[RMDB]
RNA sequence: GGGAACGACUCGAGUAGAGUCGAAAAGCCGACGCGGGUCCCGAGUGCUAUGAGCUGCAGGUGUGCGUCAAGGACUACUGCUUCGCGCGCGAGGACCGCACGGUGGGGCUGGCCGUGCUGCAGCUGCAUCCCACUCUCGAUUCGUCGAGAGUGGGAUAAAAGAAACAACAACAACAAC
Reactivity to 2A3 in 0.01 (KOAc 150mM, MgCl2 10mM, bicine 150mM(pH8.5), 24C), signal-to-noise 2, nucleotides 027 to 126: g020c010c010g030a050c100g000c030g050g030g070u040c020c000c000g010a040g030u010g010c050u130a130u300g100a040g060c060u040g000c020a000g050g080u090g050u060g150c050g020u060c140a030a110g030g030a030c030u170a060c020u160g000c000u070u060c040g000c010g000c000g000c020g040a190g000g070a050c000c010g000c010a010c000g040g030u050g020g000g020g070c040u010g040g030c010c010g040u070g030c040u040g010c000a010g020c010u050g060c020
Reactivity to DMS in 0.01 (KOAc 150mM, MgCl2 10mM, bicine 150mM(pH8.5), 24C), signal-to-noise 2, nucleotides 027 to 126: g000c040c020g030a030c140g000c040g020g000g000u000c000c020c040g010a110g020u000g000c030u000a080u000g000a100g020c060u000g020c010a060g000g000u000g000u000g020c000g020u000c250a120a120g000g010a090c050u000a200c040u000g010c050u010u000c130g000c040g020c020g010c040g010a120g020g000a120c020c040g060c000a010c010g000g000u000g010g020g000g000c020u010g000g000c000c020g020u000g000c020u000g000c020a110g010c040u000g010c120
Annotation:
Chemical mapping of a 177-nucleotide RNA with 2A3 and DMS. For 2A3, 1,928 sequencing reads were counted. 2A3 adducts were read by reverse transcription with SuperScript II with manganese.